[RMDB]
RNA sequence: GGGAACGACUCGAGUAGAGUCGAAAAAUCUACGACUCAUCAGAUCGUGGCCAGGAAAGUUUAGCUAGGUCUGCAUGUGUUUAUUAUUCUCAAGUCUUGUGUAAAUCAAUUCUUUUGGUUGACUCAAAAACUGAUUUCUUCGGAAAUCAGAAAAGAAACAACAACAACAAC
Reactivity to 2A3 in 0.01 (KOAc 150mM, MgCl2 10mM, bicine 150mM(pH8.5), 24C), signal-to-noise 5, nucleotides 027 to 129: a000u060c070u110a080c140g010a010c000u000c020a010u010c010a000g020a030u000c030g240u200g000g000c030c020a070g090g180a140a150a090g130u230u290u190a020g000c000u010a030g000g000u000c010u000g030c040a010u020g010u000g030u000u000u000a060u030u080a130u010u010c030u000c020a050a120g120u020c060u100u110g000u020g030u080a030a020a020u080c010a010a040u100u140c070u100u250u070u020g020g000u000u000g000a050c020u000c120a030a040a010a030a030
Reactivity to DMS in 0.01 (KOAc 150mM, MgCl2 10mM, bicine 150mM(pH8.5), 24C), signal-to-noise 5, nucleotides 027 to 129: a120u020c240u020a090c200g010a020c000u020c050a000u050c030a070g010a050u000c030g040u050g050g040c020c100a080g050g070a080a130a140g020u060u020u030a000g030c050u000a040g000g020u020c010u030g020c210a020u000g010u000g010u030u000u050a110u100u000a150u020u000c040u020c020a050a040g010u040c080u100u050g010u030g010u060a070a040a050u000c080a040a060u020u060c100u000u000u000u000g000g020u090u000g030a050c060u000c100a010a020a030a010a030
This 170-nucleotide RNA was probed chemically with 2A3 and DMS. For 2A3, 5,154 sequencing reads were counted. The DMS profile rests on 9,556 reads.